[RMDB]
RNA sequence: GGGAACGACUCGAGUAGAGUCGAAAACCCUUAGCAUUCGUGCUAAGGGAAAUAACGGUCGGCUCAUGCAGCUAGUGGAAAAUGCUGCUCGACCUUUUGGUAAAAUCUGGCCGUUCGCGGCCAGAAAGGAUGAGCACAUAUUCGUAUGUGCUCAUCCAAAAGAAACAACAACAACAAC
Reactivity to DMS in 0.01 (KOAc 150mM, MgCl2 10mM, bicine 150mM(pH8.5), 24C), signal-to-noise 2, nucleotides 027 to 126: c000c000c000u000u000a010g010c000a020u000u030c230g000u010g020c000u010a010a010g000g000g020a000a020a020u010a060a090c200g020g010u000c020g010g010c190u000c180a100u010g010c000a000g000c000u000a140g030u020g000g010a070a130a120a060u010g000c010u010g000c030u000c000g000a020c010c000u000u000u000u000g020g030u000a090a070a090a090u000c000u000g000g000c020c000g030u000u020c170g010c000g010g000c000c000a020g010a000a030a060
Reactivity to 2A3 in 0.01 (KOAc 150mM, MgCl2 10mM, bicine 150mM(pH8.5), 24C), signal-to-noise 2, nucleotides 027 to 126: c010c000c000u000u000a000g000c010a020u030u030c150g090u020g000c000u000a000a000g000g000g020a030a160a000u120a050a020c040g020g000u020c000g020g000c070u060c300a040u210g000c000a000g000c000u070a060g180u190g250g050a030a030a020a020u140g010c010u000g000c000u000c000g000a010c010c000u000u070u020u010g050g020u100a000a020a000a110u000c000u000g000g020c020c000g000u020u070c220g000c010g080g000c000c000a010g000a000a000a000